RNA sequence: GGGAACGACUCGAGUAGAGUCGAAAAGUAGAAUGGGUUAAUACUGCAUUUAUUGCUUUCCCUUGACCGAGAGGUCUGGGUAAUCCUUUAAUACUCAUCGUGCUGGGGAUUGAUUCUUGUAAUUAUUUAAUUAAGCGAAGUUCGCUUCGCUUAAUUAAAAAGAAACAACAACAACAAC
Reactivity to DMS in 0.01 (KOAc 150mM, MgCl2 10mM, bicine 150mM(pH8.5), 24C), signal-to-noise 1, nucleotides 027 to 126: g030u010a040g000a050a060u000g000g000g010u000u000a100a150u000a140c070u010g020c010a000u000u030u010a060u010u000g000c010u010u010u000c050c000c000u020u000g000a010c000c000g000a230g000a190g000g010u000c030u000g020g000g010u000a020a050u030c030c000u000u000u010a060a080u000a040c000u000c050a110u010c110g020u010g010c110u000g020g000g000g010a100u000u000g000a080u000u000c050u000u010g000u010a060a070u000u020a150u010u000